The data come from the RNA Mapping Database (RMDB), library RFMREP. An RNA of 177 nucleotides, treated with 2A3 and DMS and read out base by base. DMS adducts were read by reverse transcription with MarathonRT. 2A3 adducts were read by reverse transcription with SuperScript II with manganese.
[RMDB]
RNA sequence: GGGAACGACUCGAGUAGAGUCGAAAACUUUUUGGAUGAACUUGAUGAUCCAAAUGUGAGAAUCAUUUUAGAAUGCAGAAUUUAAAUUACAACAUUGUGUUUUGCUCCCUGUUCGUGUGAACAGGGACAUACAUCCUUUGUUCGCAAAGGAUGUAUGAAAAGAAACAACAACAACAAC
Reactivity to 2A3 in 0.01 (KOAc 150mM, MgCl2 10mM, bicine 150mM(pH8.5), 24C), signal-to-noise 8, nucleotides 027 to 126: c010u080u060u020u040u020g050g030a020u030g050a140a090c030u110u150g030a040u080g010a010u090c000c000a040a110a150u130g040u070g020a050g030a030a060u040c020a020u010u050u060u110a120g040a120a030u070g050c020a010g040a080a020u080u130u140a180a130a090u160u130a060c030a090a010c010a080u060u090g050u010g010u070u010u030u040g020c020u000c010c000c000u000g000u000u010c080g040u130g120u130g300a000a000c000a000g010g000g000a000
Reactivity to DMS in 0.01 (KOAc 150mM, MgCl2 10mM, bicine 150mM(pH8.5), 24C), signal-to-noise 7, nucleotides 027 to 126: c040u000u000u000u000u000g010g010a040u010g010a100a090c130u000u010g010a110u010g010a100u000c010c020a050a070a090u000g000u000g010a100g000a200a070u000c030a020u000u000u000u010a090g010a110a060u000g000c050a050g000a040a040u000u000u010a040a050a090u000u000a100c120a060a080c100a090u010u000g010u000g010u000u000u000u000g010c200u000c010c000c000u000g000u000u000c000g000u010g020u010g010a010a010c000a000g000g000g000a000
High 2A3 reactivity points to a flexible backbone, as in loops and unpaired stretches.